[RMDB]
RNA sequence: GGGAACGACUCGAGUAGAGUCGAAAAUUUCAGCUGACGUAGAUGCGGAAAACACGCUGCGCACUGCCGUUUUGGACUUUAUUGACAGGCUGCGCUGUGCCGAGCGGGCAAUUGCCGUCGCACGCCGGUCGGACCAUGAGUUCGCUCAUGGUCCGACAAAAGAAACAACAACAACAAC
Reactivity to 2A3 in 0.01 (KOAc 150mM, MgCl2 10mM, bicine 150mM(pH8.5), 24C), signal-to-noise 1, nucleotides 027 to 126: u030u040u090c000a020g050c010u030g050a200c030g030u050a020g000a270u060g030c130g100g140a040a040a040a040c090a020c070g000c000u050g000c020g040c010a010c030u030g050c000c000g050u020u100u070u000g130g000a090c040u060u190u000a130u180u150g000a040c090a070g000g050c000u040g000c040g000c080u000g030u010g040c040c080g050a180g300c030g020g000g080c070a040a220u140u260g020c010c020g030u000c000g000c000a000c030g000c090c000g010
Reactivity to DMS in 0.01 (KOAc 150mM, MgCl2 10mM, bicine 150mM(pH8.5), 24C), signal-to-noise 1, nucleotides 027 to 126: u000u000u000c020a060g010c160u000g030a140c000g010u000a060g000a050u000g010c000g020g000a090a070a060a090c070a050c090g020c030u000g000c050g000c030a030c010u000g010c050c070g010u010u000u020u000g010g000a160c050u000u000u000a050u080u000g000a130c040a020g000g000c030u000g010c150g000c050u000g000u020g050c030c060g000a130g010c040g000g000g000c070a130a230u000u000g000c050c030g030u000c060g020c050a020c080g000c030c010g010
Chemical mapping of a 177-nucleotide RNA with 2A3 and DMS. Source: RMDB library OK2TRN, as collected in RNAgym. For 2A3 the reverse transcriptase was SuperScript II with manganese. The RNA was probed in 150 mM KOAc, 10 mM MgCl2 and 150 mM bicine (pH 8.5) at 24 C. For DMS, 888 sequencing reads were counted. DMS adducts were read by reverse transcription with MarathonRT.